[RMDB]
RNA sequence: GGGAACGACUCGAGUAGAGUCGAAAAAAAAAGAUAUGGAAAGAGCAAGGCGUGGCAGGCGUUUGACGCAUUUCGGAAACGAAAUGCCGAGCCUGCCCGCUGAUGACCUCUUUCCUAAGUCAAAAAAGAAGUCUAUGUACUUCGGUACAUAGACUUCAAAAGAAACAACAACAACAAC
Reactivity to DMS in 0.01 (KOAc 150mM, MgCl2 10mM, bicine 150mM(pH8.5), 24C), signal-to-noise 1, nucleotides 027 to 126: a060a030a070a060a070g020a080u020a300u020g000g000a000a000a000g020a010g000c030a140a090g010g030c000g000u030g050g020c000a000g000g020c000g040u000u010u000g000a270c300g020c000a000u000u000u020c000g000g000a090a040a120c020g020a030a000a000u030g000c040c010g020a010g000c000c000u000g000c000c000c000g000c010u000g000a080u000g000a090c300c000u000c020u000u000u000c000c000u020a020a070g000u010c000a000a010a100a020a130a180
Record summary
Structure probing data (DMS) for a 177-nucleotide construct. It was measured as part of the RMDB library TTRDES. The reactions ran in a buffer of 150 mM KOAc, 10 mM MgCl2 and 150 mM bicine (pH 8.5), at 24 C.